Chemical mapping of a 207-nucleotide RNA with DMS and 2A3. It was measured as part of the RMDB library OK3TST. 2A3 adducts were read by reverse transcription with SuperScript II with manganese. Conditions: 150 mM KOAc, 10 mM MgCl2 and 150 mM bicine (pH 8.5), 24 C. DMS adducts were read by reverse transcription with MarathonRT.

RNA sequence: GGGAACGACUCGAGUAGAGUCGAAAAUACACUCUAUAAUUCCAUUAUCCUGUAGCCAGCAUAGCAACAACACAUUGAGCUUGCCCAUAGCAAUGUGCCUGUAGAAUGUAAACAAUGUGUAUAGUAACCAUUCUAUGCAAGUACUUGGUCAAUAUAACAUGGUGAUACCAUUCGUGGUAUCACCAUGAAAAGAAACAACAACAACAAC
Reactivity to DMS in 0.01 (KOAc 150mM, MgCl2 10mM, bicine 150mM(pH8.5), 24C), signal-to-noise 3, nucleotides 027 to 156: u000a070c040a070c030u000c040u010a120u010a090a180u000u020c000c000a110u000u000a070u000c030c050u020g030u010a070g030c040c030a110g010c030a120u010a120g050c070a060a120c020a070a060c000a040c030a070u000u000g010a130g000c060u000u000g020c040c030c040a130u000a080g020c030a090a050u000g000u000g000c000c040u010g040u000a050g010a100a050u000g020u000a050a100a100c040a060a020u010g020u000g030u010a090u000a100g010u000a070a120c160c000a150u000u000c000u010a040u000g030c040a050a100g010u010a070c050u000u000g010g020u010c020a090a080u010a080u000a050a180
Reactivity to 2A3 in 0.01 (KOAc 150mM, MgCl2 10mM, bicine 150mM(pH8.5), 24C), signal-to-noise 6, nucleotides 027 to 156: u120a000c040a010c040u120c050u050a080u050a200a160u110u040c040c030a030u090u070a060u070c020c040u060g050u070a020g060c030c040a020g000c040a080u060a070g040c030a030a060c020a030a000c010a030c000a040u000u060g050a030g040c030u020u050g030c010c000c020a040u080a040g020c030a040a060u060g010u040g020c000c010u020g000u020a020g050a110a050u100g010u140a100a050a080c040a030a070u070g030u010g010u040a020u040a190g040u040a020a010c030c000a010u070u030c000u020a020u040g020c020a020a040g040u020a070c030u040u060g020g010u090c050a090a060u140a040u090a180a020
The DMS profile rests on 5,241 reads.